Structure probing data (2A3 and DMS) for a 177-nucleotide construct. Values are in units of 0.01, from 0 to 300, in steps of 10.
[RMDB]
RNA sequence: GGGAACGACUCGAGUAGAGUCGAAAACUGCUAGAACCUCCAAACAAGCUCUCAAGGUCCAUUUGUAGGAGAACGUAGGGUAGUCAAGCUUCCAAGACUCCAGACACAUCCAAAUGAGGCGCUGCAUAGUUAUAUGUGAUUUCGAUCACAUAUAACUAAAAGAAACAACAACAACAAC
Reactivity to 2A3 in 0.01 (KOAc 150mM, MgCl2 10mM, bicine 150mM(pH8.5), 24C), signal-to-noise 9, nucleotides 027 to 126: c010u060g030c040u040a030g040a120a070c010c000u010c020c020a040a080a090c030a080a050g020c010u010c010u010c060a060a050g060g010u010c030c010a070u040u070u140g080u110a060g010g060a050g020a050a010c030g050u080a090g000g010g060u030a030g030u050c050a070a050g030c020u100u010c020c000a030a030g030a050c010u000c020c010a010g030a040c020a010c010a080u030c030c010a030a050a050u120g020a060g040g000c030g020c030u040g000c020a050u020
Reactivity to DMS in 0.01 (KOAc 150mM, MgCl2 10mM, bicine 150mM(pH8.5), 24C), signal-to-noise 8, nucleotides 027 to 126: c050u000g010c060u010a080g010a090a100c040c010u000c020c030a050a080a090c120a080a130g010c030u010c020u020c050a100a110g000g010u000c040c030a090u010u010u010g010u010a110g010g010a060g010a080a080c100g020u010a050g010g000g010u020a020g020u000c040a070a100g010c090u000u000c060c040a060a110g000a060c020u000c020c020a060g000a070c050a080c090a080u010c040c020a040a070a080u020g000a080g010g010c060g010c030u010g000c060a150u000